[RMDB]
RNA sequence: GGGAACGACUCGAGUAGAGUCGAAAACAGCUUGCCGCCGCGCAGGCGGAAAGCGCUGCGCGUGUAGUGCGCCGACUGGCGGCCGUUGCGGGGCUUGAAACGCGGGUAGCGCGCACGCCCGGCGAAGAAUACGUUAGAGUUUCGACUCUAACGUAUUAAAAGAAACAACAACAACAAC
Reactivity to DMS in 0.01 (KOAc 150mM, MgCl2 10mM, bicine 150mM(pH8.5), 24C), signal-to-noise 8, nucleotides 027 to 126: c070a130g000c070u010u010g010c030c040g010c020c010g000c120g020c060a090g000g010c010g000g000a030a040a100g000c010g020c010u000g000c180g010c130g010u020g020u010a050g020u010g000c010g000c010c010g000a060c060u010g000g010c030g000g000c020c070g020u010u010g010c060g010g010g010g000c020u010u010g010a090a090a130c060g000c000g000g000g010u020a090g020c040g010c070g010c040a050c070g010c020c020c010g000g010c020g010a100a080g010
Reactivity to 2A3 in 0.01 (KOAc 150mM, MgCl2 10mM, bicine 150mM(pH8.5), 24C), signal-to-noise 9, nucleotides 027 to 126: c030a000g060c020u080u130g030c020c010g010c000c000g020c020g030c070a040g040g030c020g010g010a120a050a010g020c030g020c010u010g000c060g010c020g070u190g020u080a140g020u030g030c040g030c010c010g070a080c030u080g060g000c000g000g030c000c010g060u090u100g030c060g020g040g020g000c010u050u110g120a150a130a030c040g010c010g000g060g050u140a070g050c020g000c000g000c040a020c020g000c000c060c000g020g000c020g020a050a020g090